[RMDB]
Source information:
The record gives the reactivity of an RNA of 177 nucleotides to DMS and 2A3. The RNA was probed in 150 mM KOAc, 10 mM MgCl2 and 150 mM bicine (pH 8.5) at 24 C. In probing experiments dimethyl sulfate is read out at A N1 and C N3, which are open when not base-paired. For DMS the reverse transcriptase was MarathonRT. For DMS, 1,959 sequencing reads were counted. The 2A3 profile rests on 3,029 reads.

RNA sequence: GGGAACGACUCGAGUAGAGUCGAAAACUCAUGCAUGCAGUACGCGCUAGGUACAUGCGUACCGAUGAUCUCGCUCAUGCGUACCUAGCUAGGAUACUCGAUCAUCGUACUGGUACCGCUGUCGUACCCCCGUGAGGGGGUUCGCCCCCUCACGGGGAAAAGAAACAACAACAACAAC
Reactivity to DMS in 0.01 (KOAc 150mM, MgCl2 10mM, bicine 150mM(pH8.5), 24C), signal-to-noise 3, nucleotides 027 to 126: c020u000c020a140u020g020c180a090u010g000c030a110g000u000a010c010g000c120g020c040u010a080g010g000u000a000c010a110u010g010c110g010u000a050c270c090g010a040u020g000a050u000c070u010c070g010c050u010c160a060u010g000c060g010u010a030c020c020u000a070g010c090u000a090g010g030a140u000a030c060u020c170g000a040u000c050a070u000c000g030u000a020c030u010g000g000u000a020c040c030g010c120u000g000u000c020g000u000a060c030
Reactivity to 2A3 in 0.01 (KOAc 150mM, MgCl2 10mM, bicine 150mM(pH8.5), 24C), signal-to-noise 3, nucleotides 027 to 126: c000u010c010a070u130g100c030a040u090g070c020a010g030u000a000c000g000c000g000c060u060a080g000g010u000a010c030a090u200g080c060g030u020a030c020c070g040a040u080g030a020u050c060u030c060g030c030u090c090a110u240g020c010g020u020a020c010c010u030a080g110c110u190a040g000g090a060u060a140c060u090c100g050a050u050c000a000u030c010g000u010a020c000u050g030g020u040a020c010c040g010c080u080g060u110c010g030u000a030c000
For 2A3 the reverse transcriptase was SuperScript II with manganese. It was measured as part of the RMDB library OK2TRN. Reactivities are given for positions 27 through 126.